[RMDB]
RNA sequence: GGGAACGACUCGAGUAGAGUCGAAAAGGUCAUCCUUCACAGGAUCGUGUGGAAGUCCUGCUCGGGGCGGAAGCAUUAAAACCAUUCGAGCUAGUCAAUGCGUGGCGUGUCGCUCCGCAGCGUGUUGUGUAUGAGAGUGGAUUCGUCCACUCUCAAACAUGAGGAUAAUAUUCGUAUUAUCCUCAUGAAAAGAAACAACAACAACAAC
Reactivity to 2A3 in 0.01 (KOAc 150mM, MgCl2 10mM, bicine 150mM(pH8.5), 24C), signal-to-noise 4, nucleotides 027 to 156: g070g020u070c030a040u050c040c010u110u190c070a060c040a060g140g040a160u160c110g030u040g000u060g050g040a070a040g020u030c010c010u040g060c060u050c050g000g000g000g000c010g000g010a050a010g000c010a020u000u190a010a010a020a060c010c000a020u050u110c120g030a030g070c160u150a060g190u110c070a050a040u050g030c030g070u030g000g010c050g020u090g090u260c040g010c010u010c000c010g050c070a010g000c030g020u060g000u000u000g000u000g040u010a100u110g000a000g000a000g000u000g010g000a020u030u060c110g010u010c010c000a000c000u000c000u010c000a010a000a000
Reactivity to DMS in 0.01 (KOAc 150mM, MgCl2 10mM, bicine 150mM(pH8.5), 24C), signal-to-noise 2, nucleotides 027 to 156: g010g010u000c080a100u000c020c010u000u000c180a130c090a110g000g010a030u010c080g040u000g000u010g030g020a250a120g020u010c010c020u000g000c080u010c060g010g020g000g000c010g000g000a230a170g000c050a100u020u020a060a080a100a030c030c000a120u000u000c070g010a120g010c060u010a140g010u000c120a060a060u000g010c080g030u000g000g010c130g010u010g020u000c010g010c010u000c000c030g020c030a100g020c030g000u000g010u000u010g040u000g030u030a160u000g000a040g010a010g040u000g010g020a090u000u000c300g010u000c000c000a020c000u010c000u000c010a010a050a120
Structure probing data (2A3 and DMS) for a 207-nucleotide construct. The data come from the RNA Mapping Database (RMDB), library M2RFPK. The DMS profile rests on 5,401 reads. Conditions: 150 mM KOAc, 10 mM MgCl2 and 150 mM bicine (pH 8.5), 24 C. Values cover nucleotides 27 to 156. 2A3 adducts were read by reverse transcription with SuperScript II with manganese.